[RMDB]
RNA sequence: GGGAACGACUCGAGUAGAGUCGAAAACGAGAUGCUUUUUGAUUUUGUUGAAGCGUAUGGGUUUAUGUAGAUUACAGAAUCCCUGAAGGUGAAUUGUCCCAGUAUUCGGAGCGAUUUCUUCUCCAACAGUAUUUUACCGUUUCGACGGUAAAAUACUAAAAGAAACAACAACAACAAC
Reactivity to DMS in 0.01 (KOAc 150mM, MgCl2 10mM, bicine 150mM(pH8.5), 24C), signal-to-noise 3, nucleotides 027 to 126: c060g010a100g010a050u000g010c070u000u010u010u010u010g000a100u000u010u000u010g020u000u000g000a120a160g010c040g040u000a050u000g000g000g010u000u000u010a060u010g020u000a070g010a250u010u010a040c030a040g010a080a080u010c010c140c050u000g010a060a100g000g020u000g000a070a100u010u000g010u000c000c000c020a220g020u010a110u000u000c150g000g010a060g020c160g010a100u000u000u000c040u010u010c010u000c010c050a070a100c190
Reactivity to 2A3 in 0.01 (KOAc 150mM, MgCl2 10mM, bicine 150mM(pH8.5), 24C), signal-to-noise 1, nucleotides 027 to 126: c030g010a020g030a100u070g060c070u040u000u040u230u220g130a090u060u100u160u300g110u050u050g010a000a000g000c000g040u070a000u110g100g050g050u020u080u060a040u060g030u000a020g040a300u160u180a010c000a000g000a030a020u030c050c000c000u010g080a040a020g080g000u060g080a140a060u060u080g010u030c000c000c000a030g080u070a240u060u150c140g010g000a000g090c030g050a060u050u130u050c000u000u000c000u010c000c030a080a090c010